[RMDB]
RNA sequence: GGGAACGACUCGAGUAGAGUCGAAAAGAUAUGGACCAUGCUAAUCGAUAUUGUCAGAAGGGCCCUUUACUCGGAAACGAGUAAAGGGCAUUUCUUGGAUUUAUAUCGACAACAUGGUCCUAAGUCACUAUCUCAACAUGUUCGCAUGUUGAGAUAGAAAAGAAACAACAACAACAAC
Reactivity to DMS in 0.01 (KOAc 150mM, MgCl2 10mM, bicine 150mM(pH8.5), 24C), signal-to-noise 2, nucleotides 027 to 126: g010a060u000a300u000g000g020a010c000c010a010u010g020c040u000a270a300u000c000g000a020u000a000u000u000g010u010c010a040g000a020a010g000g000g030c010c000c000u010u000u000a000c000u000c030g000g010a100a110a250c010g000a000g030u000a010a000a010g010g000g000c000a010u000u000u000c010u010u010g030g020a010u010u000u010a020u010a000u000c010g000a020c100a120a150c010a000u000g010g000u000c000c010u000a000a060g010u000c040a270
Reactivity to 2A3 in 0.01 (KOAc 150mM, MgCl2 10mM, bicine 150mM(pH8.5), 24C), signal-to-noise 1, nucleotides 027 to 126: g070a030u030a090u100g000g000a000c010c000a000u010g000c040u290a290a100u030c000g000a000u010a010u020u040g010u010c010a000g000a040a010g030g010g010c020c010c020u020u000u020a000c010u030c000g010g070a110a090a070c030g020a000g000u000a010a030a000g000g000g000c000a010u000u010u000c000u000u120g060g000a000u030u300u060a030u030a010u000c000g000a000c020a040a040c000a020u000g020g000u030c020c010u000a000a020g010u000c010a000
Source: RMDB library TTRINS, as collected in RNAgym. Chemical mapping of a 177-nucleotide RNA with DMS and 2A3. The reactions ran in a buffer of 150 mM KOAc, 10 mM MgCl2 and 150 mM bicine (pH 8.5), at 24 C. Reactivities are rounded to 0.1 and cut off at 0 and 3. For DMS the reverse transcriptase was MarathonRT. The 2A3 profile rests on 3,460 reads.